Conditions: 150 mM KOAc, 10 mM MgCl2 and 150 mM bicine (pH 8.5), 24 C. The record gives the reactivity of an RNA of 177 nucleotides to DMS. It was measured as part of the RMDB library OK2TRN. DMS adducts were read by reverse transcription with MarathonRT.
[RMDB]
RNA sequence: GGGAACGACUCGAGUAGAGUCGAAAAAGGCGUGAGACAUUGAGCCUGGACCCCCCAAAAAUGUUUAAGUUAGCAGAGCGAGGUGGUGGGUGCAUGAGGUCCCAGCUACUUGGGAGGCUCAGAUGGGCUUUACUGAUCGGUUCGCCGAUCAGUAAAGAAAAGAAACAACAACAACAAC
Reactivity to DMS in 0.01 (KOAc 150mM, MgCl2 10mM, bicine 150mM(pH8.5), 24C), signal-to-noise 2, nucleotides 027 to 126: a030g000g010c040g030u010g010a100g020a100c070a060u000u000g000a120g010c010c000u000g000g000a240c030c010c020c020c010c010a010a090a080a130a040u010g010u000u010u020a090a080g000u010u000a060g010c040a060g010a120g010c060g000a080g010g030u010g010g010u000g010g020g020u010g000c100a120u000g000a080g010g010u000c000c000c020a040g000c210u010a060c130u010u010g000g010g000a040g000g010c010u000c030a040g000a100u000g010g000g010